[RMDB]
RNA sequence: GGGAACGACUCGAGUAGAGUCGAAAAUAAUGCCACUUCGGUGGCAUUAGCAGGUACGAAAGCCCUAUCAUGUACAAAAUCCCAAACAACAAGAUAGGCAAAUAAUGCAUAGCUUCGGCUAUGCAAAGGUUAAUUCUGUAUUCGUACAGAAUUAACCAAAAGAAACAACAACAACAAC
Reactivity to 2A3 in 0.01 (KOAc 150mM, MgCl2 10mM, bicine 150mM(pH8.5), 24C), signal-to-noise 6, nucleotides 027 to 126: u020a000a000u010g000c000c000a010c000u030u050c210g110g010u010g060g010c000a000u000u000a000g010c020a020g080g170u090a040c050g110a160a040a010g020c000c010c000u000a000u010c030a030u070g030u040a040c040a040a080a010a080u040c010c000c000a060a090a060c080a040a000c010a030a030g000a010u010a000g000g000c000a000a050a010u260a050a040u070g000c000a000u000a000g000c010u050u040c260g070g000c000u010a000u000g000c000a000a010a000
Reactivity to DMS in 0.01 (KOAc 150mM, MgCl2 10mM, bicine 150mM(pH8.5), 24C), signal-to-noise 6, nucleotides 027 to 126: u010a000a010u000g010c000c000a000c000u000u010c180g040g020u000g010g000c000a000u000u000a010g000c210a100g010g000u000a060c090g000a060a080a080g020c170c020c000u000a010u000c010a130u000g000u000a030c080a070a050a090a100u010c010c000c000a060a100a100c140a090a050c040a110a090g010a010u000a010g010g010c040a140a070a060u010a070a080u000g000c000a020u000a010g000c000u000u020c180g020g010c000u000a000u000g000c000a010a010a050